[RMDB]
Source: RMDB library OK2TST, as collected in RNAgym. The record gives the reactivity of an RNA of 177 nucleotides to DMS and 2A3. Reactivities are given for positions 27 through 126. DMS adducts were read by reverse transcription with MarathonRT. The DMS profile rests on 2,389 reads.
RNA sequence: GGGAACGACUCGAGUAGAGUCGAAAACGGCGACAGGUUGGGAGCGAUCUUGCGCUUGCCGAACAGCUUGCCGCAGAUGUACUGCAUCACGUCGGAGAGCUGCACGACGAUCACCAGGUAGGCGAUAGCCCAUACUACGCUUCGGCGUAGUAUGGGCAAAAGAAACAACAACAACAAC
Reactivity to DMS in 0.01 (KOAc 150mM, MgCl2 10mM, bicine 150mM(pH8.5), 24C), signal-to-noise 3, nucleotides 027 to 126: c110g040g030c010g010a050c070a030g000g010u010u010g010g010g010a110g000c060g000a110u010c060u000u000g000c070g030c040u010u000g000c050c030g000a080a090c030a040g020c040u000u010g000c040c020g000c030a090g020a020u010g020u000a120c200u020g010c010a020u010c050a060c100g040u000c040g020g010a070g020a100g020c010u000g040c130a100c050g000a010c050g000a080u010c060a070c040c080a080g000g010u010a040g010g000c050g000a160u030a110
Reactivity to 2A3 in 0.01 (KOAc 150mM, MgCl2 10mM, bicine 150mM(pH8.5), 24C), signal-to-noise 2, nucleotides 027 to 126: c030g010g000c010g020a020c040a060g040g030u070u060g050g010g040a060g030c060g040a070u070c000u060u140g010c030g000c000u030u090g060c020c000g000a040a050c040a010g000c020u020u020g040c010c000g000c020a010g010a030u050g000u090a200c070u220g000c000a000u020c010a020c130g150u150c020g040g000a040g000a030g050c000u040g030c040a010c040g090a010c040g040a060u050c030a040c060c040a030g030g040u030a040g030g000c010g050a060u100a020